[RMDB]
RNA sequence: GGGAACGACUCGAGUAGAGUCGAAAAAGACGAGCGUACGCGCUCGUCAAUGGGAAUGAUGACCUUCUGUGUAGGAAUCUCAAUGAGUGACUGUGACAUAAAAAUGCAGUAAAUUCACUGACCCCAACCAAUGAACUCUCUUCGGAGAGUUCAUUGGAAAAGAAACAACAACAACAAC
Reactivity to DMS in 0.01 (KOAc 150mM, MgCl2 10mM, bicine 150mM(pH8.5), 24C), signal-to-noise 2, nucleotides 027 to 126: a120g000a000c000g010a000g060c000g060u000a080c170g070c000g030c000u000c000g010u000c000a000a060u010g000g000g000a130a110u000g000a070u050g000a120c010c000u020u030c180u020g000u030g020u020a040g000g050a300a060u010c000u010c020a040a050u030g040a040g040u000g020a060c020u000g000u000g000a030c150a100u120a060a010a020a100a060u020g000c010a000g000u000a020a050a060u000u000c010a000c010u010g000a090c050c000c000c020a080a150
Reactivity to 2A3 in 0.01 (KOAc 150mM, MgCl2 10mM, bicine 150mM(pH8.5), 24C), signal-to-noise 4, nucleotides 027 to 126: a000g000a000c000g010a000g030c010g000u030a050c280g000c000g010c110u000c000g000u000c020a000a020u040g000g000g020a100a240u070g020a040u070g090a130c000c000u080u060c070u190g180u050g040u050a000g020g020a060a050u000c000u000c040a050a110u100g010a020g010u020g030a000c000u010g030u070g050a020c020a060u300a140a130a050a040a020u170g030c000a000g010u100a100a180a110u020u010c020a010c040u040g110a110c000c000c000c000a020a010